[RMDB]
RNA sequence: GGGAACGACUCGAGUAGAGUCGAAAAUGAGGAAAUAAUGGAAAGAUAAGCAACUAAUAAAAAUGGGUAAUGGGUGGAGAUUGAUGAGGCUGUUGAGGAUGAGGGAGCAGGUUCUUUCACACACACAGUCGUGGAUGUGAUUCGUCACAUCCACGACAAAAGAAACAACAACAACAAC
Reactivity to DMS in 0.01 (KOAc 150mM, MgCl2 10mM, bicine 150mM(pH8.5), 24C), signal-to-noise 1, nucleotides 027 to 126: u030g020a000g010g000a060a020a110u000a090a140u000g000g010a060a040a110g000a130u000a040a070g000c080a130a040c060u010a160a090u000a020a060a040a090a100u000g000g000g000u010a020a070u030g010g030g010u000g000g000a040g000a150u020u000g010a020u000g000a070g010g010c040u000g020u000u000g040a140g000g010a070u010g000a070g000g000g000a050g010c150a030g010g020u000u000c070u000u010u000c060a060c140a070c190a060c160a090c150a200